The data come from the RNA Mapping Database (RMDB), library RNAMAK. Structure probing data (2A3 and DMS) for a 207-nucleotide construct. The reactions ran in a buffer of 150 mM KOAc, 10 mM MgCl2 and 150 mM bicine (pH 8.5), at 24 C.
RNA sequence: GGGAACGACUCGAGUAGAGUCGAAAAUGUGAAUUUCGAUUCACAAACUAGGGGUCCAUCGUUUGACGGACAUGAUCGUACACUGAAGCCUCCACGGUGUAUAGAUCAACAGCCCGAGAUGGACGGAGGCACCCAUCAACGCGGUUUCGACCGCGAACACUUAAAAUACAUUCGUGUAUUUUAAGUGAAAAGAAACAACAACAACAAC
Reactivity to 2A3 in 0.01 (KOAc 150mM, MgCl2 10mM, bicine 150mM(pH8.5), 24C), signal-to-noise 9, nucleotides 027 to 156: u080g010u010g010a010a020u100u140u190c270g080a050u020u020c020a000c000a040a140a010c130u200a120g070g010g120g020u000c010c000a010u010c030g140u080u200u250g150a120c060g000g020a020c080a240u300g000a000u000c010g000u010a000c000a000c000u010g020a080a010g010c000c000u000c000c000a000c000g000g000u000g010u010a010u030a090g000a000u000c020a050a090c070a110g050c000c000c000g020a030g000a030u010g000g000a000c020g000g000a000g000g000c000a010c000c010c000a040u150c080a070a130c020g000c000g000g070u050u150u160c190g120a040c010c000g000c010g010a030a010
Reactivity to DMS in 0.01 (KOAc 150mM, MgCl2 10mM, bicine 150mM(pH8.5), 24C), signal-to-noise 3, nucleotides 027 to 156: u010g020u000g010a030a020u000u000u000c190g020a120u000u000c000a000c010a050a120a120c090u000a080g010g030g000g000u000c000c000a020u000c000g020u000u000u020g020a160c020g040g000a030c020a250u010g020a010u000c000g000u020a050c000a010c000u000g020a070a110g000c000c010u000c000c040a300c030g020g020u000g050u000a030u010a090g040a030u030c000a070a050c100a150g020c000c000c000g030a150g010a020u000g000g030a060c010g010g040a030g090g020c020a140c020c020c020a190u000c090a100a140c010g050c010g030g020u000u010u000c300g010a040c020c000g020c000g010a040a200

For 2A3 the reverse transcriptase was SuperScript II with manganese. For DMS, 5,386 sequencing reads were counted. DMS adducts were read by reverse transcription with MarathonRT.